[RMDB]
RNA sequence: GGGAACGACUCGAGUAGAGUCGAAAACGGAUGCUAAAUAAGCGAGAAAAGGUAACAGCCGCAAAUGGUCACAAAAUAGUACAAUGGAGAGCAGAAGAUCGCAAAAACCACCAUAAAAAUAAAGCAACAUUUACAAUGCUUUCGAGCAUUGUAAAUGAAAAGAAACAACAACAACAAC
Reactivity to 2A3 in 0.01 (KOAc 150mM, MgCl2 10mM, bicine 150mM(pH8.5), 24C), signal-to-noise 1, nucleotides 027 to 126: c020g090g050a000u060g010c020u060a230a050a140u110a130a150g020c010g000a020g050a150a140a050a000g020g000u050a090a000c030a080g030c000c030g080c040a060a070a110u090g040g040u030c010a040c020a040a080a020a000u050a020g040u020a010c000a000a000u070g010g000a120g020a010g000c020a020g000a170a030g010a130u090c020g000c000a000a040a000a090a090c010c040a030c030c000a000u200a070a090a030a010a010u140a060a040a000g010c010a050a150
Reactivity to DMS in 0.01 (KOAc 150mM, MgCl2 10mM, bicine 150mM(pH8.5), 24C), signal-to-noise 2, nucleotides 027 to 126: c090g000g020a120u010g010c020u010a030a130a010u010a130a050g010c030g020a070g000a060a100a070a050g010g010u000a060a040c070a120g010c060c060g000c050a040a070a090u000g010g000u010c020a050c060a030a090a050a130u000a080g000u000a050c060a070a030u010g000g020a070g010a060g030c020a020g000a070a060g010a040u000c050g010c020a030a030a050a090a040c050c010a030c080c060a020u000a040a070a030a070a040u010a040a080a150g000c090a070a100